This 177-nucleotide RNA was probed chemically with 2A3 and DMS. The RNA was probed in 150 mM KOAc, 10 mM MgCl2 and 150 mM bicine (pH 8.5) at 24 C. 2A3 is a SHAPE reagent: it acylates the 2'-hydroxyl of flexible nucleotides of all four kinds. For DMS the reverse transcriptase was MarathonRT.

[RMDB]
RNA sequence: GGGAACGACUCGAGUAGAGUCGAAAAAUUGUUUCUCCUAUUUCAGGUAAAUUAGAAACAGUGGUUUCAAGUGGACAUGCAUUUGGGAUUAAAGGAACUAAUGGAGAAGUAUUAAUUCAUGUUGGAAACCAUAUCGUGGUUUCGACCACGAUAUGGUAAAAGAAACAACAACAACAAC
Reactivity to 2A3 in 0.01 (KOAc 150mM, MgCl2 10mM, bicine 150mM(pH8.5), 24C), signal-to-noise 3, nucleotides 027 to 126: a000u070u080g030u010u010u000c030u030c010c010u070a100u130u150u210c140a010g140g000u120a110a140a140u100u060a010g070a020a070a010c010a020g060u020g060g060u000u030u050c010a040a000g000u000g060g050a130c050a080u150g000c010a010u030u010u020g040g000g030a010u080u110a210a300a110g100g000a040a040c040u030a020a130u100g020g010a060g010a050a010g040u040a030u200u210a190a090u100u160c070a020u080g000u080u020g010g050a140a210
Reactivity to DMS in 0.01 (KOAc 150mM, MgCl2 10mM, bicine 150mM(pH8.5), 24C), signal-to-noise 2, nucleotides 027 to 126: a150u020u000g000u000u020u000c000u000c100c010u000a030u050u010u000c090a130g000g060u020a060a110a020u040u000a040g020a100a000a040c000a070g040u030g010g020u000u000u000c050a020a060g000u000g000g010a190c200a040u000g010c040a020u000u000u000g000g000g000a050u000u000a050a040a040g010g010a040a080c010u060a030a020u020g000g010a080g020a020a030g000u000a060u010u030a060a060u000u000c050a080u000g030u020u010g000g010a130a050